RNA sequence: GGGAACGACUCGAGUAGAGUCGAAAAUGAAAGGGUCCUGGGGUCUCUGGACAACACUUUGAGAUCCCUGGGGCCACAAACCUCACCUGCUGGCUCGCUGGUGGUUUUUGUAGAUAAGGUUUUAGGGAACCCAGCCACGCACUAAAAUGCGUGCCAGCACGCUGGUACUAUUCGUAGUACCAGCGUGAAAAGAAACAACAACAACAAC
Reactivity to DMS in 0.01 (KOAc 150mM, MgCl2 10mM, bicine 150mM(pH8.5), 24C), signal-to-noise 1, nucleotides 027 to 156: u000g000a140a150a110g000g050g040u000c010c010u010g000g030g050g020u000c000u030c010u000g000g010a060c000a120a200c150a270c020u000u000u010g020a070g000a030u000c010c000c010u000g000g000g020g010c000c010a000c050a040a100a130c040c030u000c050a080c010c020u000g000c050u010g020g010c020u000c060g060c060u000g000g020u000g030g020u000u000u000u000u000g020u010a140g000a130u010a050a060g000g000u000u000u000u000a170g000g000g000a040a090c000c000c020a070g020c010c070a020c000g000c000a040c010u000a060a070a030a040u000g050c000g030u000g020c030c010a040g020
Reactivity to 2A3 in 0.01 (KOAc 150mM, MgCl2 10mM, bicine 150mM(pH8.5), 24C), signal-to-noise 2, nucleotides 027 to 156: u080g000a110a050a040g080g000g010u000c030c000u000g000g000g020g010u000c030u010c010u050g090g040a100c090a210a090c020a270c110u230u190u180g000a000g000a070u140c020c020c020u000g000g000g000g000c010c000a000c000a000a010a000c000c010u050c050a130c010c040u030g000c000u000g020g000c030u040c070g010c010u050g040g050u040g010g030u050u050u020u050u170g140u110a090g000a210u090a180a140g020g050u070u060u090u210a100g000g010g000a010a010c000c030c000a000g020c000c000a010c050g010c010a090c030u300a040a080a060a050u050g000c000g000u010g000c000c000a000g010

Notes
The record gives the reactivity of an RNA of 207 nucleotides to DMS and 2A3. For 2A3, 769 sequencing reads were counted. DMS adducts were read by reverse transcription with MarathonRT. Values cover nucleotides 27 to 156.